[RMDB]
RNA sequence: GGGAACGACUCGAGUAGAGUCGAAAAGGCAAGGGCACAGACUAAAAACGCAGCACCUUUGACGCAGAAGUGACUGUCAGUCCUUCUCCCUGUUCAGCCUCACGGGUUCCUGCUGCCUGCCCGUGCGGUCGAGACACUGUUUCGACAGUGUCUCGACAAAAGAAACAACAACAACAAC
Reactivity to DMS in 0.01 (KOAc 150mM, MgCl2 10mM, bicine 150mM(pH8.5), 24C), signal-to-noise 3, nucleotides 027 to 126: g010g000c060a070a080g010g000g010c010a070c160a080g000a120c130u020a030a050a030a130a100c110g020c040a050g010c230a070c050c010u010u000u000g010a130c130g000c120a070g030a020a010g000u010g030a040c010u000g020u010c220a050g020u010c010c010u000u010c060u000c010c000c030u000g010u000u010c130a100g000c010c040u000c010a030c030g010g000g010u000u010c100c040u010g010c110u000g020c020c070u000g000c000c000c030g010u000g010c090g000
Reactivity to 2A3 in 0.01 (KOAc 150mM, MgCl2 10mM, bicine 150mM(pH8.5), 24C), signal-to-noise 2, nucleotides 027 to 126: g070g030c060a020a040g000g020g070c010a030c030a090g080a040c070u200a050a070a050a100a010c090g020c020a010g010c010a040c010c030u030u010u110g080a080c040g030c070a000g000a130a000g040u060g130a060c030u060g080u260c060a020g020u050c000c000u030u020c010u080c060c000c010u060g080u140u140c070a030g040c010c010u000c010a000c000g020g000g020u050u090c020c000u060g060c040u040g030c000c000u030g000c000c000c010g010u020g000c020g020